[RMDB]
RNA sequence: GGGAACGACUCGAGUAGAGUCGAAAAGAUAUGGAUGCUAGUACUUGCAAGACUAUUCGGAAACGAACGAAUCUUGAACUACAAGGACCGCAUCCUAAGUCAAAAGUACCUGGUUCGCCAGGUACAAGAUUCUGUAUCAGUUCGCUGAUACAGAAUCAAAAGAAACAACAACAACAAC
Reactivity to 2A3 in 0.01 (KOAc 150mM, MgCl2 10mM, bicine 150mM(pH8.5), 24C), signal-to-noise 4, nucleotides 027 to 126: g030a020u080a030u150g010g000a000u010g000c010u040a020g020u000a020c000u010u020g020c010a010a000g010a030c090u120a090u010u010c010g040g020a120a140a110c040g040a060a010c050g080a140a250u000c010u010u050g030a140a100c060u150a050c300a020a000g020g000a000c010c000g000c000a000u000c000c000u010a090a010g040u020c030a000a000a070a150g000u000a000c000c000u000g030g030u050u050c240g060c070c000a000g010g010u000a000c000a000a000
Reactivity to DMS in 0.01 (KOAc 150mM, MgCl2 10mM, bicine 150mM(pH8.5), 24C), signal-to-noise 5, nucleotides 027 to 126: g000a040u010a300u000g010g010a010u000g000c010u000a040g010u000a120c010u000u000g000c000a010a010g020a060c090u000a290u000u000c000g000g000a090a090a190c050g000a030a030c090g000a060a110u000c020u000u000g000a080a030c070u010a260c010a000a010g000g000a100c260c190g010c010a010u000c000c000u000a030a090g000u000c030a060a090a100a090g000u000a000c000c000u000g000g000u010u000c230g010c010c000a010g000g010u000a000c010a030a080
Structure probing data (2A3 and DMS) for a 177-nucleotide construct. For 2A3, 11,669 sequencing reads were counted. DMS adducts were read by reverse transcription with MarathonRT. The data come from the RNA Mapping Database (RMDB), library TTRDEL. DMS (dimethyl sulfate) methylates the pairing face of unpaired adenines and cytosines.